[RMDB]
RNA sequence: GGGAACGACUCGAGUAGAGUCGAAAAGAUAUGGAGAAGAUAAAAUCUCGAUAUGGGACAUGCUUUGGGAUCGGAAACGAUCCUUGAGCAACAGCCCAUGAUCGAGAUUUUAUCUUCUCCUAAGUCACUAAGCAUGAAUGUUCGCAUUCAUGCUUAGAAAAGAAACAACAACAACAAC
Reactivity to DMS in 0.01 (KOAc 150mM, MgCl2 10mM, bicine 150mM(pH8.5), 24C), signal-to-noise 3, nucleotides 027 to 126: g010a070u010a300u000g000g000a010g000a000a010g000a020u000a000a000a020a020u000c000u000c000g000a010u000a030u000g000g000g030a060c110a220u000g010c010u000u010u000g010g020g010a020u000c010g010g000a160a110a240c000g000a000u000c000c000u000u000g010a000g010c000a020a070c300a180g010c030c000c010a010u000g020a000u010c000g010a010g010a000u000u000u000u010a000u000c010u000u000c000u000c010c000u000a010a070g010u000c050a200
Background
Chemical mapping of a 177-nucleotide RNA with DMS. The DMS profile rests on 3,206 reads. Conditions: 150 mM KOAc, 10 mM MgCl2 and 150 mM bicine (pH 8.5), 24 C.